[RMDB]
RNA sequence: GGGAACGACUCGAGUAGAGUCGAAAACUCUUGGAAGGCGGUGCGCCGGUGUGCGUGCUUGCUCGUGUACGUGUGCUGGUUGGGCAAGUGUGUGUGUGUGGCAGAGGGAAAAGGUAACCAAAAUACAGCUAAAUCACUAUUUCGAUAGUGAUUUAGCAAAAGAAACAACAACAACAAC
Reactivity to 2A3 in 0.01 (KOAc 150mM, MgCl2 10mM, bicine 150mM(pH8.5), 24C), signal-to-noise 3, nucleotides 027 to 126: c010u020c000u060u050g070g040a090a050g060g010c010g020g010u050g000c030g020c020c030g020g030u100g010u030g020c020g020u020g020c010u100u180g020c020u030c050g060u020g010u040a040c030g030u060g010u020g030c000u020g010g070u090u090g050g000g000c020a050a030g030u000g000u010g010u010g000u010g000u010g010u040g010g000c020a000g030a030g050g010g000a020a090a010a000g040g030u040a050a040c030c030a030a040a000a080u240a070c060a000
Reactivity to DMS in 0.01 (KOAc 150mM, MgCl2 10mM, bicine 150mM(pH8.5), 24C), signal-to-noise 7, nucleotides 027 to 126: c040u000c040u000u000g010g020a110a100g010g010c060g010g010u000g020c060g010c020c010g020g020u000g020u000g020c020g010u000g010c010u000u000g020c050u000c070g010u000g010u010a070c100g010u010g020u000g010c030u010g010g000u000u000g020g000g020c050a050a050g010u010g020u000g010u000g010u000g020u000g020u000g000g000c050a060g000a090g000g000g000a050a040a070a050g000g000u000a060a150c060c090a040a050a060a100u010a090c230a170
Overview: The data come from the RNA Mapping Database (RMDB), library OK2TST. Structure probing data (2A3 and DMS) for a 177-nucleotide construct. For 2A3 the reverse transcriptase was SuperScript II with manganese. For DMS the reverse transcriptase was MarathonRT.